[RMDB]
RNA sequence: GGGAACGACUCGAGUAGAGUCGAAAAGUACCCUUGUUCGCAAGGGUACAAAGACAGACUUCACUGUCAUAAAGAAGGUAACAUCUCAGUUUCAAUAAGAGAAAAGCACCUACUUCGGUAGGUGCAAGUACUGAUAACUCUUCGGAGUUAUCAGUACAAAAGAAACAACAACAACAAC
Reactivity to 2A3 in 0.01 (KOAc 150mM, MgCl2 10mM, bicine 150mM(pH8.5), 24C), signal-to-noise 4, nucleotides 027 to 126: g000u000a000c000c000c000u020u000g040u030u050c150g000c150a000a000g000g000g000u000a000c000a000a000a010g010a000c000a020g030a050c050u100u040c140a040c090u030g010u060c010a020u200a040a140a010g120a030a030g070g060u120a070a030c010a120u040c030u010c070a060g030u010u090u080c140a160a110u240a260a040g060a010g030a050a110a040a000g010c000a000c010c000u000a000c010u010u090c180g070g000u000a000g000g000u010g010c000a000a000
Reactivity to DMS in 0.01 (KOAc 150mM, MgCl2 10mM, bicine 150mM(pH8.5), 24C), signal-to-noise 4, nucleotides 027 to 126: g000u000a010c000c000c000u010u000g010u000u000c170g030c020a000a000g010g000g010u000a000c010a040a080a100g000a050c010a010g000a150c110u000u010c070a130c000u000g010u000c120a110u000a040a070a090g010a060a040g000g010u010a060a090c150a060u000c030u020c030a100g010u010u000u000c070a070a060u000a090a100g000a100g000a050a080a090a170g010c000a000c000c000u000a000c000u000u000c170g010g010u000a000g000g010u000g000c010a000a020